Notes
Conditions: 150 mM KOAc, 10 mM MgCl2 and 150 mM bicine (pH 8.5), 24 C. Chemical mapping of a 177-nucleotide RNA with DMS and 2A3. High DMS reactivity at an A or C suggests that its Watson-Crick edge is free. The data come from the RNA Mapping Database (RMDB), library VIROID.
[RMDB]
RNA sequence: GGGAACGACUCGAGUAGAGUCGAAAAAGAAAGGCUAAGCACCUCGCAAUGAGGUAAGGUGGGACUUUUCCUUCUGAAACCAAGCGGUUGGUUCCGAGGGGGGUGUGAUCCAGGUACCGCCGUAGAACGAUGUAUAUACGUUCGCGUAUAUACAUCGAAAAGAAACAACAACAACAAC
Reactivity to DMS in 0.01 (KOAc 150mM, MgCl2 10mM, bicine 150mM(pH8.5), 24C), signal-to-noise 6, nucleotides 027 to 126: a030g010a050a060a070g010g010c050u000a060a110g010c100a060c010c010u000c020g010c180a130a090u010g000a040g010g010u000a040a040g010g020u010g000g010g000a120c030u000u000u000u000c010c010u000u000c040u000g000a060a040a070c020c020a060a090g010c160g000g010u000u010g030g000u010u000c020c030g000a070g010g010g010g000g000g020u010g020u020g000a070u010c060c020a110g000g020u000a050c040c020g010c010c020g020u000a070g010a090a160
Reactivity to 2A3 in 0.01 (KOAc 150mM, MgCl2 10mM, bicine 150mM(pH8.5), 24C), signal-to-noise 6, nucleotides 027 to 126: a000g110a030a020a000g030g010c040u050a030a020g070c020a040c030c000u000c020g070c150a180a300u290g020a030g040g040u040a010a050g040g020u040g010g020g030a030c020u040u030u050u030c010c000u020u030c030u050g060a070a010a030c010c000a050a040g070c040g130g050u180u300g040g010u060u020c020c020g020a180g020g030g000g000g000g020u080g060u070g060a040u030c020c010a010g020g010u020a030c010c000g010c010c010g020u030a030g050a100a010

Source information:
2A3 adducts were read by reverse transcription with SuperScript II with manganese.